Structure probing data (2A3) for a 207-nucleotide construct. It was measured as part of the RMDB library RNAMAK. The RNA was probed in 150 mM KOAc, 10 mM MgCl2 and 150 mM bicine (pH 8.5) at 24 C.
RNA sequence: GGGAACGACUCGAGUAGAGUCGAAAAACCUUUGUGACGACCUAAGACAGAAGUUGGGAGCACUCCGCGUCCCAUUGGGACGAUGGAGUGCUUUGAUCAACUUUCGAGGUCGUCACUCUGGUAAAGGAUACAUGCCUCUUCGGAGGCAUGUAUCCAAGCCCUUAAACUUGUUCGCAAGUUUAAGGGCAAAAGAAACAACAACAACAAC
Reactivity to 2A3 in 0.01 (KOAc 150mM, MgCl2 10mM, bicine 150mM(pH8.5), 24C), signal-to-noise 1, nucleotides 027 to 156: a000c010c000u010u000u010g000u040g000a000c000g000a000c000c000u060a140a100g130a090c110a110g060a060a010g020u010u010g050g000g000a000g000c000a010c010u000c000c000g010c000g000u000c000c010c070a190u120u300g000g000g000a030c130g070a300u080g030g000a000g020u030g000c020u010u000u000g000a000u010c010a000a000c020u020u080u130c030g000a010g000g010u000c000g000u000c040a000c000u000c000u000g000g000u040a120a110a030g010g000a000u000a020c000a000u000g000c000c000u040c000u050u100c240g140g000a000g030g000c000a000u000g000u010a000u010c010c000a000a000